[RMDB]
RNA sequence: GGGAACGACUCGAGUAGAGUCGAAAAACAUACAUGAAACGACAGCGGAGGACUAUGGUUCUUACCGAUUGGAGUCUUCGUGGAUGAAAACAAAAACCUGAUGAAGUUCGAGUGAUCUGGGACGCAAUAAAUCCUCACGUUUCGACGUGAGGAUUUAAAAAGAAACAACAACAACAAC
Reactivity to DMS in 0.01 (KOAc 150mM, MgCl2 10mM, bicine 150mM(pH8.5), 24C), signal-to-noise 1, nucleotides 027 to 126: a040c000a020u000a010c010a030u010g010a000a040a010c010g010a220c010a020g000c010g000g010a050g000g010a020c070u000a140u010g030g010u010u000c010u000u010a100c030c000g000a060u040u000g030g010a160g010u000c120u000u000c050g020u010g000g000a000u000g010a080a050a090a090c160a080a050a090a120a070c020c020u000g010a120u020g020a090a040g000u010u000c050g000a130g000u020g000a050u010c090u000g010g000g030a080c080g030c190a050a060
Chemical mapping of a 177-nucleotide RNA with DMS. For DMS, 848 sequencing reads were counted. The reactions ran in a buffer of 150 mM KOAc, 10 mM MgCl2 and 150 mM bicine (pH 8.5), at 24 C. Values are in units of 0.01, from 0 to 300, in steps of 10. For DMS the reverse transcriptase was MarathonRT. Reactivities are given for positions 27 through 126.